[RMDB]
RNA sequence: GGGAACGACUCGAGUAGAGUCGAAAACCCAGGUCGGACCGCGGGGAGGUGGAGAUGCCAUGCCGACCCGAAGAGGAAAGGAAGGACACAGACGCGAACCGUGAGUGGAACCCUCGAUCCUUUAUUGCGUACCAUACGAGUUCGCUCGUAUGGUACGAAAAGAAACAACAACAACAAC
Reactivity to DMS in 0.01 (KOAc 150mM, MgCl2 10mM, bicine 150mM(pH8.5), 24C), signal-to-noise 1, nucleotides 027 to 126: c020c020c010a170g010g010u000c000g000g010a170c040c070g010c100g090g000g000g000a120g010g010u000g000g050a160g070a140u000g010c120c060a150u000g000c010c010g000a160c030c000c000g050a090a100g010a110g000g020a020a100a130g010g010a040a100g000g010a080c020a050c010a050g000a040c060g000c070g000a160a070c080c030g040u000g030a100g000u030g000g000a140a100c100c000c050u000c020g000a100u000c070c020u000u000u000a120u080u000g000
Reactivity to 2A3 in 0.01 (KOAc 150mM, MgCl2 10mM, bicine 150mM(pH8.5), 24C), signal-to-noise 1, nucleotides 027 to 126: c010c000c000a000g000g060u040c000g070g000a010c030c050g000c040g030g040g000g040a040g040g060u080g060g020a190g040a110u230g050c020c000a040u100g050c020c000g020a050c000c000c000g010a050a000g030a050g000g040a000a000a100g050g020a010a030g020g000a000c000a010c000a060g120a000c080g020c040g010a060a020c070c020g020u040g100a050g010u050g010g020a020a030c040c010c000u000c080g040a080u080c060c000u120u160u080a150u150u230g070
Annotation: The data come from the RNA Mapping Database (RMDB), library 15KREP. An RNA of 177 nucleotides, treated with DMS and 2A3 and read out base by base. For DMS, 574 sequencing reads were counted. Values cover nucleotides 27 to 126. 2A3 is a SHAPE reagent: it acylates the 2'-hydroxyl of flexible nucleotides of all four kinds. The reactions ran in a buffer of 150 mM KOAc, 10 mM MgCl2 and 150 mM bicine (pH 8.5), at 24 C. For 2A3 the reverse transcriptase was SuperScript II with manganese. The 2A3 profile rests on 884 reads.